Structure probing data (DMS and 2A3) for a 177-nucleotide construct. Reactivities are given for positions 27 through 126. For DMS the reverse transcriptase was MarathonRT. The reactions ran in a buffer of 150 mM KOAc, 10 mM MgCl2 and 150 mM bicine (pH 8.5), at 24 C. The data come from the RNA Mapping Database (RMDB), library TTRDES. The DMS profile rests on 5,659 reads.

RNA sequence: GGGAACGACUCGAGUAGAGUCGAAAAGAUAUGGAUCGAUGCCAUGACAUGCUCCGGAUCGGAAACGAUCCGAAGAGCAACAGCAUGCAUCGAUCCUAAGUCAAAGUGCAACCUUCGGGUUGCACAACUAGCCCAUAAAGUUCGCUUUAUGGGCUAGAAAAGAAACAACAACAACAAC
Reactivity to DMS in 0.01 (KOAc 150mM, MgCl2 10mM, bicine 150mM(pH8.5), 24C), signal-to-noise 4, nucleotides 027 to 126: g000a010u010a190u010g000g010a000u000c000g010a010u000g000c180c110a010u000g000a220c210a200u010g010c000u000c000c000g010g010a010u000c000g030g010a070a040a070c000g000a020u000c000c000g010a030a090g010a010g020c010a030a110c280a160g000c020a010u000g010c000a000u000c010g000a000u000c000c010u000a010a080g000u010c010a140a110a120g000u000g000c000a010a000c000c000u000u020c250g030g010g010u000u000g000c000a010c000a010a100
Reactivity to 2A3 in 0.01 (KOAc 150mM, MgCl2 10mM, bicine 150mM(pH8.5), 24C), signal-to-noise 4, nucleotides 027 to 126: g010a000u030a010u060g010g000a010u000c010g010a000u010g220c300c080a010u010g040a180c190a300u140g020c000u030c010c000g000g000a010u000c000g010g020a010a020a010c000g010a010u000c000c000g010a060a030g000a000g140c000a060a020c070a060g300c000a000u010g000c000a000u000c000g000a000u000c000c000u000a010a000g000u000c030a020a130a150g010u000g000c000a000a000c000c010u050u110c300g060g000g010u000u010g010c000a000c000a000a000